About this RNA:
Chemical mapping of a 177-nucleotide RNA with DMS and 2A3. The RNA was probed in 150 mM KOAc, 10 mM MgCl2 and 150 mM bicine (pH 8.5) at 24 C. Values cover nucleotides 27 to 126.

RNA sequence: GGGAACGACUCGAGUAGAGUCGAAAAGAUAUGGAUCCCUCGUCUUAGCAAGGCUACGAGUCCGCGAUCGGAAACGAUCGAACUACGGACCCUGUAGCUGAUGACCUAAGACGAGGGAUCCUAAGUCCUUUUUCUUAUUGUUCGCAAUAAGAAAAAGAAAAGAAACAACAACAACAAC
Reactivity to DMS in 0.01 (KOAc 150mM, MgCl2 10mM, bicine 150mM(pH8.5), 24C), signal-to-noise 4, nucleotides 027 to 126: g000a120u010a240u000g010g010a010u000c000c010c000u000c010g010u010c000u000u000a010g010c040a080a170g000g020c000u000a000c000g010a060g000u000c000c010g000c000g010a010u000c000g010g000a190a090a260c020g000a010u000c000g000a070a100c170u010a300c020g000g000a010c000c010c000u030g050u000a010g000c020u010g010a050u010g000a110c300c000u000a000a000g010a000c000g000a010g000g000g000a000u000c000c000u000a000a100g020u010c040
Reactivity to 2A3 in 0.01 (KOAc 150mM, MgCl2 10mM, bicine 150mM(pH8.5), 24C), signal-to-noise 2, nucleotides 027 to 126: g030a070u170a070u240g030g030a010u000c030c010c000u000c020g010u010c010u030u000a020g040c040a300a300g020g040c010u010a020c020g030a010g040u000c020c000g050c000g000a000u000c000g070g090a120a100a070c010g020a020u030c000g040a140a060c130u300a070c100g000g000a010c000c000c110u300g010u010a000g000c000u010g010a020u040g040a020c000c010u000a020a030g000a000c000g000a000g000g000g010a000u010c000c000u010a010a000g010u000c000